RNA sequence: GGGAACGACUCGAGUAGAGUCGAAAACGGAAGCAUUAAAACCAUUCGAGCUAGUCAAUGCGUGGCGUGUCUCUCCGCAGCGUGUUGGCGAAUGUAAAGAGUGACUAAGCAUGUAGUACCGAGGAUAAUAAGAGCAAUUCGUUCGCGAAUUGCUCAACUAAGUAGUAGCGUUCGCGCUACUACUUAGAAAAGAAACAACAACAACAAC
Reactivity to 2A3 in 0.01 (KOAc 150mM, MgCl2 10mM, bicine 150mM(pH8.5), 24C), signal-to-noise 7, nucleotides 027 to 156: c050g030g040a060a030g030c020a040u080u120a050a050a030a090c050c010a020u040u040c050g020a020g040c030u050a010g020u010c010a010a010u010g010c000g000u030g090g010c020g010u090g070u030c030u020c010u010c100c010g000c010a020g010c010g000u020g000u020u010g010g000c000g010a020a020u070g020u060a060a070a030g040a010g010u030g010a030c040u050a050a020g060c030a050u070g020u090a040g030u050a080c030c050g010a050g060g030a050u090a200a030u140a260a090g000a000g000c000a000a000u000u000c000g030u070u090c200g000c000g110a000a000u000u000g000c000u000c000a000a000
Reactivity to DMS in 0.01 (KOAc 150mM, MgCl2 10mM, bicine 150mM(pH8.5), 24C), signal-to-noise 4, nucleotides 027 to 156: c050g000g010a210a150g020c040a090u000u000a060a100a100a090c060c020a120u000u000c030g010a220g010c020u000a140g030u000c040a020a030u010g000c020g000u000g010g050c020g030u000g010u010c080u010c040u010c200c020g020c010a060g010c040g020u020g030u000u000g010g030c030g020a080a030u000g030u010a060a040a150g010a060g030u000g000a110c050u000a070a110g000c080a050u000g010u000a090g020u000a070c020c020g010a180g000g020a160u000a060a130u010a130a120g000a010g000c010a010a020u000u000c010g030u000u000c240g070c020g030a020a020u000u010g010c010u000c010a010a040